[RMDB]
RNA sequence: GGGAACGACUCGAGUAGAGUCGAAAAGAGGAAAUCGUGUCUCGGAGCGCGCGGAGUAAACAUAUAUGGUUCAUAUAUAACCGUAGGCACGUAAAGAAAGCGCGUAAGGCAGAGAGAACUGCCAGAAAAAUCAGGCAUGGUUCGCCAUGCCUGAUUUAAAAGAAACAACAACAACAAC
Reactivity to 2A3 in 0.01 (KOAc 150mM, MgCl2 10mM, bicine 150mM(pH8.5), 24C), signal-to-noise 2, nucleotides 027 to 126: g140a020g010g170a010a050a030u080c010g000u020g000u000c010u010c040g110g030a120g070c030g000c000g000c000g000g050a060g060u220a040a090a020c090a010u070a010u020a000u010g300g070u220u180c030a000u010a000u000a020u030a040a020c040c000g000u020a000g000g000c000a010c010g020u050a070a020a000g030a040a030a000g030c000g000c020g000u020a090a110g000g000c000a010g020a000g010a000g050a040a030c000u000g000c000c000a000g020a000a180
Reactivity to DMS in 0.01 (KOAc 150mM, MgCl2 10mM, bicine 150mM(pH8.5), 24C), signal-to-noise 2, nucleotides 027 to 126: g000a140g020g000a060a140a050u020c010g000u010g010u000c000u000c010g030g010a120g000c020g040c000g020c000g060g020a130g000u000a070a060a120c180a040u000a040u000a000u000g000g030u060u030c060a020u040a000u000a030u000a050a060c000c000g050u020a020g000g000c030a010c020g040u030a100a050a090g000a060a130a130g000c020g010c020g000u010a090a070g000g080c000a010g000a080g000a300g000a030a050c000u000g000c000c000a170g010a030a110